RNA sequence: GGGAACGACUCGAGUAGAGUCGAAAAUAAGUGGUUACCGAUAUGUAUUUGGUAGGUACAUAAUGUCAUGGGAGCCCAUCAUUGUUGUGAGAUCUUAGAUGGGGGUUAUCUAGUUAAGCUGGUGAGAGAAGAGAGGAGGAAAGGUUUCCUAAGGAAGAACCAUACCGUGAUUCGUCACGGUAUGGUUAAAAGAAACAACAACAACAAC
Reactivity to 2A3 in 0.01 (KOAc 150mM, MgCl2 10mM, bicine 150mM(pH8.5), 24C), signal-to-noise 2, nucleotides 027 to 156: u090a020a020g020u040g040g050u010u020a050c010c040g000a000u010a050u150g030u050a060u060u120u010g070g050u060a110g010g040u010a000c010a000u120a040a080u140g120u120c040a050u130g010g000g020a020g010c000c000c020a020u120c010a020u020u110g050u000u090g000u000g050a110g000a020u050c030u050u120a050g000a120u070g000g020g000g000g000u000u020a030u070c100u060a020g080u080u040a060a040g030c050u030g050g000u040g030a040g000a000g000a030a020g060a000g020a020g000g030a020g000g050a080a070a010g030g010u030u040u000c000c020u040a060a050g120g010a010a100g050
Reactivity to DMS in 0.01 (KOAc 150mM, MgCl2 10mM, bicine 150mM(pH8.5), 24C), signal-to-noise 1, nucleotides 027 to 156: u000a050a100g020u000g030g010u000u000a070c030c010g000a180u000a030u000g000u000a030u000u000u000g040g000u000a100g010g040u000a050c030a020u000a070a110u000g000u000c070a070u010g010g000g020a130g050c000c010c000a070u000c040a150u010u000g030u000u000g000u000g000a130g010a100u000c050u010u000a070g020a070u010g010g020g030g030g020u000u000a020u000c050u000a110g000u000u000a050a170g020c070u000g010g040u000g010a080g000a070g010a080a070g010a130g030a060g000g010a060g000g010a020a060a090g000g010u000u000u000c000c020u000a100a120g020g030a140a110g030
Chemical mapping of a 207-nucleotide RNA with 2A3 and DMS. The DMS profile rests on 3,049 reads. The data come from the RNA Mapping Database (RMDB), library OK3TST. DMS adducts were read by reverse transcription with MarathonRT.